The record gives the reactivity of an RNA of 177 nucleotides to 2A3 and DMS. The 2A3 profile rests on 3,187 reads. The reactions ran in a buffer of 150 mM KOAc, 10 mM MgCl2 and 150 mM bicine (pH 8.5), at 24 C. For 2A3 the reverse transcriptase was SuperScript II with manganese.
[RMDB]
RNA sequence: GGGAACGACUCGAGUAGAGUCGAAAAGAUAUGGAUAUCGUACUGCUUGCCGAAGAACUCGGAAACGAGGGAGGCAAGAACUACAGUGACGAUAUCCUAAGUCAAAAGCGCAUGUUCGCAUGCGCAAGUCUUUCAUGCUGUUCGCAGCAUGAAAGACAAAAGAAACAACAACAACAAC
Reactivity to 2A3 in 0.01 (KOAc 150mM, MgCl2 10mM, bicine 150mM(pH8.5), 24C), signal-to-noise 2, nucleotides 027 to 126: g010a010u090a030u120g000g000a000u000a000u000c000g000u010a010c000u000g050c010u010u020g010c010c000g100a300a080g040a130a080c010u010c000g000g000a080a020a020c010g000a010g040g010g010a010g020g020c020a000a010g000a010a000c040u220a050c040a010g020u040g300a050c020g000a010u000a000u040c000c000u000a000a000g020u000c030a000a030a060a190g000c000g000c010a000u010g030u050u170c300g000c140a010u020g000c000g000c000a020a010
Reactivity to DMS in 0.01 (KOAc 150mM, MgCl2 10mM, bicine 150mM(pH8.5), 24C), signal-to-noise 1, nucleotides 027 to 126: g020a040u000a300u010g000g000a000u000a010u000c000g020u000a020c000u000g000c010u000u000g000c000c080g070a130a110g000a120a160c010u000c000g040g010a170a160a110c010g040a020g000g000g010a090g010g030c000a040a000g000a010a000c180u000a270c000a000g000u000g010a040c010g020a000u000a000u000c000c010u000a000a040g020u010c030a080a090a040a090g000c010g000c000a000u000g000u010u020c270g070c020a000u000g010c000g000c000a000a020